[RMDB]
RNA sequence: GGGAACGACUCGAGUAGAGUCGAAAAACGCGGAGUACGCUCCGCGACAACACUUCUUUCGACCCGCUAACCGAGACCUAUGGGUCGUUAAAUUACGUCUCUAUCUUAGUCACAUAACAUCGCACAAAAAACGUGGUUCGGUUCGCCGAACCACGAAUCAGAACUCUUUCUUCGGAAAGAGUUCUGAAAAAGAAACAACAACAACAAC
Reactivity to 2A3 in 0.01 (KOAc 150mM, MgCl2 10mM, bicine 150mM(pH8.5), 24C), signal-to-noise 2, nucleotides 027 to 156: a000c000g000c000g000g000a000g020u040a000c120g020c090u010c010c000g090c000g010a000c000a060a020c050a000c000u040u090c040u010u280u110c020g000a000c010c000c000g020c220u220a000a050c010c040g010a010g020a020c010c010u000a090u270g000g000g010u000c000g010u040u030a000a010a000u240u120a000c000g000u010c010u010c020u020a190u040c040u080u090a040g220u100c040a040c000a210u240a210a050c010a100u120c130g010c190a050c060a050a140a010a140a100a010c040g000u000g000g000u020u000c000g000g050u040u140c240g000c070c030g000a000a000c010c000a000c000g000a000a000
The record gives the reactivity of an RNA of 207 nucleotides to 2A3. Conditions: 150 mM KOAc, 10 mM MgCl2 and 150 mM bicine (pH 8.5), 24 C. 2A3 adducts were read by reverse transcription with SuperScript II with manganese. 2A3 is a SHAPE reagent: it acylates the 2'-hydroxyl of flexible nucleotides of all four kinds. It was measured as part of the RMDB library M2RFPK. For 2A3, 560 sequencing reads were counted.